[RMDB]
RNA sequence: GGGAACGACUCGAGUAGAGUCGAAAAAGGGCGAGACAAUCCAAGAGUUCGGUGCCCGUCAGUCUUUUUACCGGAAACUUGGGCAGCUUGGGCACAACGGCAUAGACCUUGGUUGCGAGGUUGGCACCAGUGACACAAUGUUCGCAUUGUGUCACUGAAAAGAAACAACAACAACAAC
Reactivity to 2A3 in 0.01 (KOAc 150mM, MgCl2 10mM, bicine 150mM(pH8.5), 24C), signal-to-noise 1, nucleotides 027 to 126: a000g050g000g020c040g040a110g040a080c050a010a070u000c020c000a000a000g030a020g060u160u110c060g000g030u060g000c040c020c010g020u060c010a010g020u020c050u000u080u070u060u160a040c000c000g020g040a060a030a040c020u040u060g010g000g000c000a010g040c010u060u080g010g020g000c060a040c060a060a040c040g020g030c020a040u040a130g030a090c010c000u000u040g090g000u100u080g000c060g050a030g040g000u020u020g030g000c020a040c110
Reactivity to DMS in 0.01 (KOAc 150mM, MgCl2 10mM, bicine 150mM(pH8.5), 24C), signal-to-noise 3, nucleotides 027 to 126: a080g010g010g000c030g020a070g030a080c120a120a150u010c040c020a050a040g020a120g010u010u010c050g020g010u010g000c010c000c010g000u000c110a080g010u000c020u010u000u010u010u010a110c040c040g000g000a070a030a050c040u010u010g010g000g030c100a080g000c060u010u010g010g000g010c030a060c050a050a090c130g000g030c070a080u010a070g010a060c050c040u000u010g010g020u000u000g010c050g000a070g010g020u010u020g010g000c090a100c100